The record gives the reactivity of an RNA of 207 nucleotides to 2A3 and DMS. DMS adducts were read by reverse transcription with MarathonRT. The reactions ran in a buffer of 150 mM KOAc, 10 mM MgCl2 and 150 mM bicine (pH 8.5), at 24 C. The DMS profile rests on 4,169 reads. The 2A3 profile rests on 2,733 reads.
RNA sequence: GGGAACGACUCGAGUAGAGUCGAAAAACACAGCACGCGUUUGCGUUGGGUUGCGCGCCAUUAUUGUGUAUUAAGCAGUAUUCUGUAUUAGGGAACCUUUCAAUACCGCAUCCAGGCGCAACACAGAUGGCACGUUUGCUUAACACAUCAGUGACUCCUAUCAGCAUAGGUUCGCCUAUGCUGAUAGAAAAGAAACAACAACAACAAC
Reactivity to 2A3 in 0.01 (KOAc 150mM, MgCl2 10mM, bicine 150mM(pH8.5), 24C), signal-to-noise 5, nucleotides 027 to 156: a000c060a000c010a020g040c000a010c020g060c030g010u060u140u140g040c000g000u010u010g040g030g010u000u020g010c020g000c020g120c060c040a070u100u090a100u220u160g010u000g040u040a070u100u110a090a060g010c110a010g030u100a230u120u030c010u040g120u110a190u130u250a160g090g000g000a030a060c020c000u040u140u080c020a030a030u020a010c020c060g040c020a000u020c040c020a040g010g010c000g000c010a010a010c010a000c000a030g100a120u120g110g020c010a010c010g020u020u060u050g000c000u070u030a090a000c070a000c010a180u200c060a050g020u020g070a050c030u020c030
Reactivity to DMS in 0.01 (KOAc 150mM, MgCl2 10mM, bicine 150mM(pH8.5), 24C), signal-to-noise 2, nucleotides 027 to 156: a090c040a110c090a110g000c030a050c010g040c020g040u000u000u000g060c030g030u020u010g000g000g000u010u000g000c010g000c030g020c040c020a060u010u000a100u010u000g000u020g010u000a110u000u000a030a140g020c020a000g000u010a090u000u020c060u000g030u000a100u000u010a120g000g040g020a090a110c030c000u010u000u010c080a060a070u000a030c010c020g030c020a110u010c050c040a130g040g020c020g030c030a060a060c030a020c020a100g010a050u000g030g000c070a060c000g040u010u000u010g050c000u000u000a080a080c000a040c040a060u000c120a090g020u000g010a080c040u000c040